Source: RMDB library OK1LIB, as collected in RNAgym. This 177-nucleotide RNA was probed chemically with DMS and 2A3.

RNA sequence: GGGAACGACUCGAGUAGAGUCGAAAAUAUCGACCCGGUUGCUAUUGAAUACCCGUGUAUGGCGUUGCUGACACGGACGAGCACUGCCAUGUCGGGCGGUGUUUCAAGUCCUAGCCUGGGCUAGAAAAGUCUCAGUUCCUUUCGAGGAGCUGGGGCUAAAAGAAACAACAACAACAAC
Reactivity to DMS in 0.01 (KOAc 150mM, MgCl2 10mM, bicine 150mM(pH8.5), 24C), signal-to-noise 9, nucleotides 027 to 126: u020a090u020c120g000a190c010c000c000g000g010u010u020g010c030u000a090u010u010g000a100a070u030a120c110c000c010g010u010g000u010a070u020g000g000c020g020u030u040g010c010u000g010a050c040a030c050g000g000a050c140g000a030g000c010a010c010u010g010c010c010a090u020g020u050c200g000g000g010c020g010g010u010g000u000u000u000c020a090a090g010u010c050c050u000a050g010c040c020u010g010g010g000c030u000a050g000a070a070a090
Reactivity to 2A3 in 0.01 (KOAc 150mM, MgCl2 10mM, bicine 150mM(pH8.5), 24C), signal-to-noise 9, nucleotides 027 to 126: u170a030u040c050g040a080c000c000c000g010g010u070u160g000c010u030a030u090u120g030a060a060u100a160c010c000c000g010u010g020u040a260u070g030g000c100g130u080u240g000c000u020g010a000c010a010c030g010g020a010c040g010a000g000c000a000c010u020g000c000c010a120u200g100u230c110g030g010g000c000g000g000u020g010u010u180u040c050a070a030g040u040c010c010u000a010g010c000c010u040g000g020g000c000u020a020g060a020a090a000
The RNA was probed in 150 mM KOAc, 10 mM MgCl2 and 150 mM bicine (pH 8.5) at 24 C. For 2A3, 11,762 sequencing reads were counted.